[RMDB]
RNA sequence: GGGAACGACUCGAGUAGAGUCGAAAACGAUGACUCAAAUGUCAGCGCUUCUUUACGGGCUGACUAUUUAGAGAAACUUCGACAAGCUGAGUUGGUUCGUCAAAGUUUGCGCAAGGUGCGAGUUGUCACGGACAUCGUCUUUCGAGACGAUGUCCGUAAAAGAAACAACAACAACAAC
Reactivity to DMS in 0.01 (KOAc 150mM, MgCl2 10mM, bicine 150mM(pH8.5), 24C), signal-to-noise 1, nucleotides 027 to 126: c190g030a020u020g000a020c000u000c010a070a300a000u000g000u020c050a130g000c000g060c020u000u020c100u010u000u000a010c040g030g000g030c010u090g010a000c000u010a070u000u000u000a020g020a300g010a120a150a080c110u000u000c060g050a120c270a060a060g010c060u000g010a010g050u010u000g040g000u000u000c000g000u000c150a000a010a010g020u000u000u000g070c010g000c050a150a070g040g000u000g020c300g000a030g000u000u010g010u030c030
Chemical mapping of a 177-nucleotide RNA with DMS. Source: RMDB library OK2TST, as collected in RNAgym. The RNA was probed in 150 mM KOAc, 10 mM MgCl2 and 150 mM bicine (pH 8.5) at 24 C.